[RMDB]
RNA sequence: GGGAACGACUCGAGUAGAGUCGAAAAGAUAUGGACAUGAACUACGCUUGAAGAGGCGUUGAAAUCGUACUAUCUUCGGAAACGAAGAUAGUACGAUGGAGCCUUGGAGGAGCGCAUGUCCUAAGUCCGUUCAAAGAGUGUUCGCACUCUUUGAACGAAAAGAAACAACAACAACAAC
Reactivity to 2A3 in 0.01 (KOAc 150mM, MgCl2 10mM, bicine 150mM(pH8.5), 24C), signal-to-noise 1, nucleotides 027 to 126: g060a030u130a080u280g010g020a000c000a020u020g040a170a070c110u220a090c300g000c010u060u050g000a060a010g000a030g020g000c010g100u110u020g040a030a010a000u000c000g000u000a000c010u000a000u000c000u000u030c030g040g120a100a070a050c020g020a020a010g020a000u000a000g020u000a010c000g010a000u000g000g010a000g000c000c000u020u020g010g020a150g110g270a000g000c030g010c030a010u030g000u000c000c000u020a020a010g010u000c100
Reactivity to DMS in 0.01 (KOAc 150mM, MgCl2 10mM, bicine 150mM(pH8.5), 24C), signal-to-noise 2, nucleotides 027 to 126: g000a070u030a300u010g010g010a030c000a010u010g000a130a140c140u000a300c030g020c010u020u000g000a300a190g000a010g000g030c010g020u000u010g020a150a170a020u000c010g020u010a000c000u000a000u000c000u000u000c000g000g000a110a060a220c000g000a000a010g000a020u000a020g000u010a000c000g000a000u000g000g000a170g030c000c000u030u000g030g000a250g000g000a000g040c050g020c000a000u000g010u000c000c000u000a030a040g010u000c070